Annotation:
The record gives the reactivity of an RNA of 177 nucleotides to 2A3. For 2A3, 487 sequencing reads were counted.
[RMDB]
RNA sequence: GGGAACGACUCGAGUAGAGUCGAAAAACUUUUUGAAUGUAAGCAUCAAACCCUCACCCUGACAAAAAAUGUGGCUUUCUUUCUCUUGAAGAGGUCCUGUCUUUUUCCCUUUUUUGGCUUGUAGUUUAGAUUAACGCAGAUUCGUCUGCGUUAAUCUAAAAGAAACAACAACAACAAC
Reactivity to 2A3 in 0.01 (KOAc 150mM, MgCl2 10mM, bicine 150mM(pH8.5), 24C), signal-to-noise 1, nucleotides 027 to 126: a010c050u160u120u010u020u090g110a110a040u090g030u190a000a060g010c000a020u010c080a000a010a060c000c000c010u030c020a050c000c000c000u010g030a050c010a010a140a060a060a030a010u220g000u080g040g010c050u070u160u000c000u020u110u010c050u030c030u020u180g020a150a010g000a000g020g050u000c020c000u050g020u030c050u040u040u000u000u060c030c000c000u060u080u000u000u030u030g150g010c040u020u020g000u040a050g010u010u000u000